Structure probing data (2A3 and DMS) for a 207-nucleotide construct. The 2A3 profile rests on 3,080 reads.
[RMDB]
RNA sequence: GGGAACGACUCGAGUAGAGUCGAAAACUCAUUAGUCCUUCGGGACUAAUGAGAAAAAGAUAUGGAUAAGAGGCGAGGAUCACACGGGUCUCGGAAACGAGACUUGUGGGAGCCUUAUCCUAAGUCAAAAAUCCCUUCGCCUUCGGGCGAAGGGAAACUUAAUAUGUAGCUUCGGCUACAUAUUAAGAAAAGAAACAACAACAACAAC
Reactivity to 2A3 in 0.01 (KOAc 150mM, MgCl2 10mM, bicine 150mM(pH8.5), 24C), signal-to-noise 2, nucleotides 027 to 156: c000u000c000a000u000u000a000g000u000c010c020u030u100c300g060g010g000a000c000u000a000a000u000g000a000g000a060a040a000a000a000g030a010u050a020u050g020g000a020u030a040a130g060a070g150g090c080g090a130g110g130a140u170c030a020c000a010c130g040g000g000u000c010u000c010g000g010a050a020a010c010g000a000g000a000c000u010u010g000u000g020g100g010a000g020c000c000u000u010a000u000c000c000u000a050a010g020u030c030a000a010a050a070a200u060c010c000c000u000u000c010g010c030c000u050u060c300g090g010g000c000g010a010a010g000g000g000a000a010a000
Reactivity to DMS in 0.01 (KOAc 150mM, MgCl2 10mM, bicine 150mM(pH8.5), 24C), signal-to-noise 1, nucleotides 027 to 156: c010u000c000a000u000u000a000g000u000c000c010u000u010c290g070g010g030a020c000u010a000a000u000g010a020g000a010a020a050a140a120g000a160u000a160u000g010g020a120u010a040a200g010a120g000g020c260g000a050g050g010a080u000c000a040c000a020c020g010g010g000u000c000u000c000g060g000a080a120a200c010g010a020g010a010c000u010u010g020u000g000g010g020a000g000c010c000u000u010a000u000c000c010u000a080a210g000u040c070a000a060a120a070a100u010c020c010c010u000u020c010g090c050c000u000u010c300g050g010g030c000g000a000a000g000g020g010a000a000a010
Values cover nucleotides 27 to 156. Source: RMDB library RNAMAK, as collected in RNAgym. In probing experiments dimethyl sulfate is read out at A N1 and C N3, which are open when not base-paired.